[RMDB]
RNA sequence: GGGAACGACUCGAGUAGAGUCGAAAACAGUGAUGGAAACAUCACUGAAAAACGUGGAAGCGCCACACGAAAAAGUCGAUCGAAUACCGAUCGACAAGCGCUAAAGUCAUGCCGAAAGGCAUGACAAAUGAUCGGUCGGAUUCGUCCGACCGAUCAUAAAAGAAACAACAACAACAAC
Reactivity to 2A3 in 0.01 (KOAc 150mM, MgCl2 10mM, bicine 150mM(pH8.5), 24C), signal-to-noise 1, nucleotides 027 to 126: c040a000g000u000g020a000u000g000g050a010a000a030c010a000u000c000a000c000u000g000a020a000a000a000a000c000g000u010g010g010a150a000g000c020g000c000c050a020c020a000c110g200a060a000a000a080a080g000u000c000g010a000u010c000g010a090a090u270a300c160c000g000a000u000c000g000a000c080a000a030g000c000g000c020u070a030a030a030g010u000c000a000u000g000c000c050g020a070a020a010g000g000c000a000u000g000a000c000a000a000